RNA sequence: GGGAACGACUCGAGUAGAGUCGAAAAAAUAUGUGAGUGCAGCAAAUAUGGAUAUGCAAAUAUGUAUCUUGGGGAGAAGUACCCGGUCUUCAAGAGGGGAUCGCACAUAACUAACUGGAUUUCUCUGGGCUGUCGGAUCGAAAAGGAAAUGCAGCUAGUACUGCCUAGGAUUCGUCCUAGGCAGUACAAAAGAAACAACAACAACAAC
Reactivity to 2A3 in 0.01 (KOAc 150mM, MgCl2 10mM, bicine 150mM(pH8.5), 24C), signal-to-noise 1, nucleotides 027 to 156: a000a000u250a040u080g040u020g030a010g040u120g000c050a080g020c010a030a160a000u150a080u130g060g000a000u020a000u060g000c010a000a060a000u170a040u170g020u050a010u010c010u000u040g010g010g000g010a270g010a130a000g040u000a070c000c020c000g000g040u000c080u050u000c100a060a000g030a150g040g010g010g000a010u000c020g060c000a000c010a010u110a150a000c020u020a050a000c020u080g010g020a000u090u060u000c040u010c020u090g100g000g030c000u000g070u260c020g000g000a010u020c130g020a080a020a030a030g080g000a010a010a010u040g000c010a010g020c020u220a020